[RMDB]
RNA sequence: GGGAACGACUCGAGUAGAGUCGAAAACGCGAUCACCUGGGCGCACCCCGAACUCCCGCAGCGGGCGUUCGACCUCGGCGCCGGACAGGGCACGAUCCGCCGAUCGGGCGACCGUGCCGAGGGAACGCUAUUAGUGCCGCUUCGGCGGCACUAAUAGAAAAGAAACAACAACAACAAC
Reactivity to 2A3 in 0.01 (KOAc 150mM, MgCl2 10mM, bicine 150mM(pH8.5), 24C), signal-to-noise 1, nucleotides 027 to 126: c020g000c000g020a030u080c040a070c120c040u070g070g060g000c030g000c010a040c000c010c000c030g010a020a030c030u040c000c000c020g000c060a080g180c180g050g070g000c000g010u020u000c020g150a200c010c030u010c010g010g000c010g000c030c080g000g040a100c100a040g130g110g000c020a030c010g030a010u060c090c070g050c090c070g060a250u130c090g090g000g000c050g040a040c000c000g020u040g000c000c000g000a000g000g000g050a050a020c020g000
Reactivity to DMS in 0.01 (KOAc 150mM, MgCl2 10mM, bicine 150mM(pH8.5), 24C), signal-to-noise 2, nucleotides 027 to 126: c160g010c030g010a100u000c080a120c040c060u010g010g010g010c060g000c070a160c030c020c030c020g000a050a050c060u000c010c020c000g000c150a090g000c160g020g030g020c040g020u000u000c010g010a110c000c020u000c050g000g000c000g030c040c060g020g020a100c150a130g010g010g040c060a040c020g000a030u000c040c130g030c180c090g010a050u000c070g010g000g020c040g000a090c030c020g000u010g010c010c010g000a020g000g000g000a060a060c100g010

Source: RMDB library OK2TRN, as collected in RNAgym. This 177-nucleotide RNA was probed chemically with 2A3 and DMS. Conditions: 150 mM KOAc, 10 mM MgCl2 and 150 mM bicine (pH 8.5), 24 C.